This 177-nucleotide RNA was probed chemically with DMS and 2A3. Conditions: 150 mM KOAc, 10 mM MgCl2 and 150 mM bicine (pH 8.5), 24 C. Source: RMDB library OK1LIB, as collected in RNAgym.

RNA sequence: GGGAACGACUCGAGUAGAGUCGAAAACGUUCUGGGGCAUUCGACAUCCUGCUGGCCGCUUACUCGCUGGCGGCCACCCUGUGGCAGAUCGCCAAUCCGCCGGAGCGGCUCACCGACGCCUAUGCCGCAUACACCAGGCCUUCGGGCCUGGUGUAUGAAAAGAAACAACAACAACAAC
Reactivity to DMS in 0.01 (KOAc 150mM, MgCl2 10mM, bicine 150mM(pH8.5), 24C), signal-to-noise 1, nucleotides 027 to 126: c060g000u000u000c010u000g000g030g080g020c020a110u010u000c100g000a030c020a070u000c020c030u030g060c080u030g000g020c010c040g000c050u000u030a040c050u040c140g000c110u010g010g000c020g000g000c000c090a000c030c010c070u000g000u000g000g040c000a090g000a120u000c110g050c030c020a040a020u000c110c000g020c030c060g060g000a130g000c050g000g000c020u000c050a010c040c090g000a010c060g000c020c070u000a040u040g000c000c000g000
Reactivity to 2A3 in 0.01 (KOAc 150mM, MgCl2 10mM, bicine 150mM(pH8.5), 24C), signal-to-noise 3, nucleotides 027 to 126: c020g040u050u010c020u090g000g000g080g030c060a090u070u100c100g070a030c000a070u080c020c030u030g090c040u040g010g020c000c000g000c000u050u140a110c020u040c080g070c110u040g000g010c000g010g000c000c000a000c010c010c010u090g010u060g030g000c000a030g040a190u100c040g000c020c000a030a130u040c020c000g030c060c000g040g000a030g020c020g010g030c040u040c020a070c010c010g070a100c040g010c010c000u030a020u090g020c000c010g000